[RMDB]
RNA sequence: GGGAACGACUCGAGUAGAGUCGAAAAUCUGAGUUUGCUAAAUCGUUUAGAUUAAUGGUUGCUAAGUAUGAGGCAUUUGUACCUUACGAUAGUAAUUUGCCAACUUUGGUUUUACAAGGAGAUGUCGCACUGCGAGCGUCUUCGGACGCUCGCAGUGAAAAGAAACAACAACAACAAC
Reactivity to 2A3 in 0.01 (KOAc 150mM, MgCl2 10mM, bicine 150mM(pH8.5), 24C), signal-to-noise 1, nucleotides 027 to 126: u000c010u000g000a000g000u000u000u030g000c000u060a010a010a010u110c210g170u300u230u230a040g000a000u010u010a100a030u110g170g000u000u000g000c060u060a010a010g000u000a300u060g030a060g060g030c000a000u000u020u290g300u300a240c000c000u110u000a000c000g200a180u000a130g000u000a000a000u020u100u080g000c030c000a000a000c070u080u000u020g000g050u000u030u000u000a130c070a000a080g180g000a100g000a090u000g040u040c070g000